[RMDB]
An RNA of 177 nucleotides, treated with DMS and 2A3 and read out base by base.

RNA sequence: GGGAACGACUCGAGUAGAGUCGAAAAGAUAUGGAGGGAGCUAUUGUAACGAAACUAGUCGGAAACGACUAGGAACCGUUACCGUAGCGAAGAACUCCUAAGUCAAACAAGGGCUUCGGCCCUUGAAGUCUGUAUGAGAGUUCGCUCUCAUACAGACAAAAGAAACAACAACAACAAC
Reactivity to DMS in 0.01 (KOAc 150mM, MgCl2 10mM, bicine 150mM(pH8.5), 24C), signal-to-noise 2, nucleotides 027 to 126: g010a030u000a300u020g010g000a000g000g000g000a060g000c000u020a010u000u010g010u020a010a000c030g010a070a060a300c000u000a000g010u010c020g020g010a080a120a210c020g000a000c000u000a000g000g020a110a260c220c000g000u000u000a000c000c020g010u000a020g020c010g000a050a110g010a130a150c000u000c000c010u000a040a070g000u000c020a090a150a300c000a010a010g020g030g000c000u000u030c150g020g000c010c000c000u010u000g010a060a080
Reactivity to 2A3 in 0.01 (KOAc 150mM, MgCl2 10mM, bicine 150mM(pH8.5), 24C), signal-to-noise 1, nucleotides 027 to 126: g010a020u060a010u130g020g000a000g040g010g010a040g000c000u010a010u010u020g010u000a000a000c030g000a090a030a070c010u000a000g000u010c000g010g020a080a060a080c010g030a000c000u000a010g010g020a040a080c050c020g000u000u000a010c010c000g000u010a010g000c000g150a090a000g000a010a020c010u030c000c000u020a140a020g030u100c020a060a020a130c010a010a000g030g000g030c000u060u250c300g270g010c050c010c000u000u000g000a010a030
For DMS the reverse transcriptase was MarathonRT. Reactivities are rounded to 0.1 and cut off at 0 and 3.